[RMDB]
This 207-nucleotide RNA was probed chemically with 2A3 and DMS.
RNA sequence: GGGAACGACUCGAGUAGAGUCGAAAAUUUAGGUUCAUGAGCCAUUUUCAGUUAAUUUCUGUGAAAGGUGUAAUGUCACUGUGUAGAUUAAGUUUUUGCAUGUGGAUGUCUGGUUGUACCAGCAUCAUUUAUUGAAGAGACUGUCAUUAUUGGAUUGCAUUACACUUGUCUUCGGACAAGUGUAAUGAAAAGAAACAACAACAACAAC
Reactivity to 2A3 in 0.01 (KOAc 150mM, MgCl2 10mM, bicine 150mM(pH8.5), 24C), signal-to-noise 6, nucleotides 027 to 156: u130u120u100a050g020g020u030u040c030a020u070g030a010g010c010c020a050u030u030u040u090c040a010g010u020u060a120a110u080u150u060c050u050g060u030g090a110a040a040g020g000u050g030u120a080a080u080g020u050c030a010c070u040g000u010g060u140a050g010a090u040u100a150a080g070u030u010u020u090u100g040c040a030u090g030u070g130g030a000u010g110u060c010u000g020g070u040u130g050u090a180c000c000a010g010c000a000u000c000a000u050u110u100a100u030u100g050a050a020g020a000g010a070c030u030g030u090c040a040u040u180a050u080u100g080g010a040u120u220g020
Reactivity to DMS in 0.01 (KOAc 150mM, MgCl2 10mM, bicine 150mM(pH8.5), 24C), signal-to-noise 4, nucleotides 027 to 156: u010u000u000a070g010g020u000u000c050a120u010g010a260g050c010c010a120u000u000u000u000c040a070g020u000u000a080a130u000u010u000c030u000g010u010g000a060a070a100g000g040u000g010u010a110a070u000g000u010c040a060c040u020g040u000g030u010a080g040a120u000u010a060a100g030u000u000u000u000u000g020c020a040u010g030u010g020g010a070u000g000u000c010u000g000g000u000u000g010u010a300c010c010a030g000c010a020u000c000a060u010u000u010a070u010u000g020a060a060g000a070g010a040c020u010g040u000c010a150u000u010a080u010u000g010g000a140u010u010g000

The data come from the RNA Mapping Database (RMDB), library OK3TST. 2A3 adducts were read by reverse transcription with SuperScript II with manganese.